This 177-nucleotide RNA was probed chemically with 2A3 and DMS. For DMS the reverse transcriptase was MarathonRT. Reactivities are given for positions 27 through 126. The 2A3 profile rests on 3,001 reads. 2A3 is a SHAPE reagent: it acylates the 2'-hydroxyl of flexible nucleotides of all four kinds.
[RMDB]
RNA sequence: GGGAACGACUCGAGUAGAGUCGAAAAUUCGGUGACGCGCUCGUCGCCGCGGCCCAAGGCAAAGUACCGAUGCUGAAUACCCGGGCGGAGAAGGCGAUCGCGGGUUUCGUCGAGAUGUUCGACGAGCAGUUCAAGGUACUUUCGAGUACCUUGAACUAAAAGAAACAACAACAACAAC
Reactivity to 2A3 in 0.01 (KOAc 150mM, MgCl2 10mM, bicine 150mM(pH8.5), 24C), signal-to-noise 2, nucleotides 027 to 126: u040u020c020g030g000u030g070a030c010g070c020g020c080u060c100g000u000c000g000c020c020g050c030g060g020c010c030c050a060a060g030g000c040a120a070a000g100u050a080c000c030g020a030u070g010c040u070g080a100a040u080a160c050c000c000g060g040g000c060g030g020a160g020a130a050g080g000c010g020a040u050c010g020c030g070g000g000u090u090u050c000g000u020c010g000a030g020a140u300g180u240u020c010g010a000c000g000a010g040c050
Reactivity to DMS in 0.01 (KOAc 150mM, MgCl2 10mM, bicine 150mM(pH8.5), 24C), signal-to-noise 4, nucleotides 027 to 126: u010u000c010g000g030u000g010a090c020g000c180g020c300u010c030g020u000c000g000c050c000g000c140g030g010c030c020c050a100a160g000g000c040a050a050a120g000u000a060c040c020g000a130u010g000c090u010g010a120a090u000a140c030c010c020g000g020g020c020g000g000a120g010a120a130g000g010c030g000a040u000c030g000c020g020g010g000u000u000u010c000g010u000c000g010a040g000a120u010g000u030u000c010g000a010c000g000a030g020c130